[RMDB]
RNA sequence: GGGAACGACUCGAGUAGAGUCGAAAAUCGACUUCCUUCGGGAAGUCGAAAAUAACGGUCGGCUCAUGAAGCUAGUCGAACAUGCUGCUCGACCUAGUCUAAAAAGAAUCUCGUUCGCGAGAUUCAACAACACUAUGCGGUUCGCCGCAUAGUGUUGAAAAGAAACAACAACAACAAC
Reactivity to DMS in 0.01 (KOAc 150mM, MgCl2 10mM, bicine 150mM(pH8.5), 24C), signal-to-noise 2, nucleotides 027 to 126: u000c000g000a020c000u000u000c000c000u010u020c180g030g040g020a000a000g000u000c000g000a000a010a110a060u020a100a150c230g010g010u000c000g000g000c000u010c020a020u000g010a080a300g010c050u000a090g000u020c080g000a080a160c000a010u000g020c200u000g000c000u000c010g010a000c020c000u000a010g000u000c050u040a030a070a110a080a060g000a000a010u000c010u000c000g020u010u020c150g030c010g000a030g000a000u000u000c000a040a150
Reactivity to 2A3 in 0.01 (KOAc 150mM, MgCl2 10mM, bicine 150mM(pH8.5), 24C), signal-to-noise 2, nucleotides 027 to 126: u000c000g000a010c000u020u030c000c010u000u030c140g020g010g000a010a000g000u000c000g000a020a010a000a010u050a020a040c080g020g000u000c000g000g020c010u020c020a010u020g000a060a030g060c130u090a070g300u280c020g030a080a050c020a010u020g060c020u010g010c070u110c150g000a000c010c000u000a020g060u000c030u030a100a080a000a000a070g000a000a000u000c000u000c000g020u030u050c220g000c000g070a010g000a010u000u000c000a010a000
An RNA of 177 nucleotides, treated with DMS and 2A3 and read out base by base. For 2A3, 2,424 sequencing reads were counted. The reactions ran in a buffer of 150 mM KOAc, 10 mM MgCl2 and 150 mM bicine (pH 8.5), at 24 C. DMS adducts were read by reverse transcription with MarathonRT. Values cover nucleotides 27 to 126. For 2A3 the reverse transcriptase was SuperScript II with manganese.